[RMDB]
RNA sequence: GGGAACGACUCGAGUAGAGUCGAAAACAAUUGGAAUAUCCAUAUCCUGUACCCUACCUCAUCAACCCUGCACAUGCGUUCAUGUGGGUACACGCGUGUGCAUGCACGGGCACACACACACACACACCGGGGUAUCCGGUUUCGACCGGAUACCCCGAAAAGAAACAACAACAACAAC
Reactivity to 2A3 in 0.01 (KOAc 150mM, MgCl2 10mM, bicine 150mM(pH8.5), 24C), signal-to-noise 1, nucleotides 027 to 126: c100a000a080u010u100g020g000a130a040u120a090u270c100c020a040u050a090u140c060c000u160g050u080a140c040c040c010u080a080c030c000u050c000a120u100c000a070a140c000c010c010u030g020c020a000c010a010u010g040c000g000u050u090c080a080u250g080u130g170g050g000u090a000c000a000c000g000c000g000u030g030u010g000c000a000u010g000c000a020c080g000g020g000c000a000c010a000c000a000c000a000c000a000c000a000c000a020c000a090c000
Background
Structure probing data (2A3) for a 177-nucleotide construct. Source: RMDB library OK1LIB, as collected in RNAgym. The 2A3 profile rests on 481 reads. For 2A3 the reverse transcriptase was SuperScript II with manganese.